[RMDB]
RNA sequence: GGGAACGACUCGAGUAGAGUCGAAAACGCUGGGAGCGUAACAUCCCUGCAGCGAGGAUCUACCUGAAGCGCGCACGGGUAGGGAGCUGAAGGUGGCUCCUGUGCUGAAGCGCGCACGGCAACCGAAAGGUGCGAUAAGGGCAGUUCGCUGCCCUAAAACACAAUUUCCAUUCGUGGAAAUUGUGUUAAAAGAAACAACAACAACAAC
Reactivity to DMS in 0.01 (KOAc 150mM, MgCl2 10mM, bicine 150mM(pH8.5), 24C), signal-to-noise 1, nucleotides 027 to 156: c080g010c040u000g000g000g000a090g010c010g060u000a080a220c120a100u030c010c000c000u000g000c000a040g000c010g000a160g000g010a070u000c010u000a040c010c000u010g030a100a080g040c010g090c020g020c010a300c090g000g000g060u000a180g030g000g020a070g040c000u000g010a070a040g020g000u030g010g020c020u000c010c010u010g050u000g000c020u000g020a070a140g020c000g030c020g200c010a160c020g000g070c020a040a050c010c000g020a120a050a280g020g020u010g000c020g010a120u020a060a080g020g000g000c010a020g050u000u010c240g060c010u010g010c000c000c000u000a000a060
Reactivity to 2A3 in 0.01 (KOAc 150mM, MgCl2 10mM, bicine 150mM(pH8.5), 24C), signal-to-noise 4, nucleotides 027 to 156: c060g000c070u130g020g020g030a040g010c010g070u070a040a040c030a150u180c020c000c000u060g050c020a000g000c010g050a190g050g060a090u000c010u010a010c010c000u020g040a230a020g010c020g000c000g000c010a010c040g010g020g000u030a020g000g040g050a000g000c020u030g040a060a040g150g060u120g070g000c000u000c000c000u020g060u070g000c010u090g030a090a020g020c010g000c020g000c000a000c000g030g000c020a050a110c010c000g060a060a030a010g060g000u060g030c020g030a070u080a240a080g000g010g000c000a010g020u080u090c150g020c090u000g000c000c000c000u200a210a220